The data come from the RNA Mapping Database (RMDB), library OK2TRN.
An RNA of 177 nucleotides, treated with 2A3 and DMS and read out base by base.
DMS adducts were read by reverse transcription with MarathonRT.
Conditions: 150 mM KOAc, 10 mM MgCl2 and 150 mM bicine (pH 8.5), 24 C.
The 2A3 profile rests on 1,564 reads.
[RMDB]
RNA sequence: GGGAACGACUCGAGUAGAGUCGAAAACUUUGCAAAACAUUGCUGCCUAAAGAAACUCAGCAGCCUCAGGCCCAAUUCUGCCACUUCUGGUUUGGGUACAGUUAAAGGCAACCCUGAGGGACUUGGCUCAACGACUCAUAUUCGUAUGAGUCGUUGAAAAAGAAACAACAACAACAAC
Reactivity to 2A3 in 0.01 (KOAc 150mM, MgCl2 10mM, bicine 150mM(pH8.5), 24C), signal-to-noise 1, nucleotides 027 to 126: c000u060u070u160g000c020a000a000a080a120c030a230u010u100g010c030u040g030c010c000u160a120a090a010g030a020a010a040c010u030c010a020g010c010a010g010c000c010u010c050a040g030g040c010c000c040a010a020u140u090c100u110g020c020c010a170c090u260u100c110u150g060g000u010u080u060g040g000g000u240a260c050a030g000u080u160a120a100a010g000g030c010a020a040c050c000c000u000g010a000g000g000g020a010c000u020u010g020g000c000
Reactivity to DMS in 0.01 (KOAc 150mM, MgCl2 10mM, bicine 150mM(pH8.5), 24C), signal-to-noise 2, nucleotides 027 to 126: c060u000u010u000g000c060a060a080a090a170c110a130u000u000g010c040u000g040c020c040u010a070a070a070g020a020a150a270c000u000c030a040g010c130a300g020c020c000u000c050a100g000g010c020c010c030a060a040u000u010c140u000g000c030c030a100c220u010u010c090u000g040g010u000u000u020g000g010g020u000a070c050a080g040u000u020a060a120a030g000g000c000a030a080c190c300c000u000g020a060g000g000g000a290c050u000u000g000g040c100